This 177-nucleotide RNA was probed chemically with DMS and 2A3. For 2A3 the reverse transcriptase was SuperScript II with manganese.
[RMDB]
RNA sequence: GGGAACGACUCGAGUAGAGUCGAAAAGAUAUGGAGUUCUACCCACCGCUACUUCGCAUCGAUCUCGGAAACGAGGGAGCGAAGAAUAGCGAGGAACUCCUAAGUCAAAGCCAAGUUCGCUUGGCAAGAUAGGCAUGCUGUUCGCAGCAUGCCUAUCAAAAGAAACAACAACAACAAC
Reactivity to DMS in 0.01 (KOAc 150mM, MgCl2 10mM, bicine 150mM(pH8.5), 24C), signal-to-noise 1, nucleotides 027 to 126: g010a010u000a250u000g010g020a010g000u000u000c000u000a120c040c030c060a300c130c020g000c000u000a010c000u000u000c010g030c000a300u000c160g000a020u020c000u010c000g010g000a110a050a100c000g000a000g040g000g000a040g000c000g010a000a020g010a010a000u000a000g000c000g000a050g020g000a020a000c000u010c000c000u010a000a060g040u030c230a120a090a230g000c000c000a040a000g000u000u010c130g000c000u040u000g000g000c040a000a030
Reactivity to 2A3 in 0.01 (KOAc 150mM, MgCl2 10mM, bicine 150mM(pH8.5), 24C), signal-to-noise 1, nucleotides 027 to 126: g080a060u240a200u220g000g000a030g010u020u010c010u110a300c060c010c030a030c030c000g060c030u020a020c010u000u000c020g030c010a240u230c110g100a150u110c000u020c030g030g020a190a100a090c040g020a020g000g000g000a010g000c020g010a000a010g020a030a180u100a020g030c020g000a050g000g000a000a000c000u000c000c010u020a090a010g080u050c110a170a090a000g030c000c000a000a000g020u010u190c280g050c130u000u000g000g000c010a000a010